[RMDB]
Structure probing data (2A3) for a 207-nucleotide construct. Reactivities are given for positions 27 through 156. For 2A3 the reverse transcriptase was SuperScript II with manganese.

RNA sequence: GGGAACGACUCGAGUAGAGUCGAAAAAAUUAGAGGCAAUUUGAAAUAAUUUAAAUUAACUCAACCCUACUGCACUUACCGAACUAGAUAACGGUGUAGUAGGGGUAAAUUCUCCGCAUUCGGUGCGCAACCACCUGAGGUUUCGACCUCAGGUGAAGUUAAUCUCAGAGUUCGCUCUGAGAUUAACAAAAGAAACAACAACAACAAC
Reactivity to 2A3 in 0.01 (KOAc 150mM, MgCl2 10mM, bicine 150mM(pH8.5), 24C), signal-to-noise 1, nucleotides 027 to 156: a000a000u240u180a060g000a000g000g000c030a010a000u010u010u020g030a090a110a110u160a180a300u170u080u090a050a060a010u040u040a050a040c000u010c000a000a020c000c000c000u000a000c000u000g020c000a000c000u020u050a040c020c010g020a050a000c030u070a110g080a190u100a290a020c120g080g000u010g000u000a000g000u000a000g030g000g000g000u010a000a000a000u050u010c020u020c010c010g020c000a020u030u050c010g070g030u040g010c000g000c050a070a070c040c000a020c000c010u000g000a000g020g020u040u080u200c170g070a100c010c000u000c000a000g040g010u000g040a010a000